The record gives the reactivity of an RNA of 177 nucleotides to 2A3. Values cover nucleotides 27 to 126. The data come from the RNA Mapping Database (RMDB), libraries RFM100 and RFMREP.
[RMDB]
RNA sequence: GGGAACGACUCGAGUAGAGUCGAAAAUUCGCCUCGGAGUUCGUGCCAGGAGUGCGUUUGCAAAGCACGCUACAAGUUUGCGUUAUUGCAAAGUUGACACUGUAAAUGCACUAUCUGGUACGACACCGGCCUAGGGUAGAUUCGUCUACCCUAGGCCAAAAGAAACAACAACAACAAC
Reactivity to 2A3 in 0.01 (KOAc 150mM, MgCl2 10mM, bicine 150mM(pH8.5), 24C), signal-to-noise 5, nucleotides 027 to 126: u050u030c060g100c010c020u070c020g030g010a080g010u150u050c000g000u010g000c000c000a000g000g010a000g000u000g000c000g010u000u000u020g000c010a090a100a040g110c050a040c180g060c030u110a130c030a080a140g090u010u030u020g010c030g060u120u100a150u160u250g010c030a000a030a070g100u040u040g040a070c000a000c050u010g000u000a000a000a000u010g020c000a000c010u050a300u080c000u000g000g010u000a000c000g000a000c010a010c000c010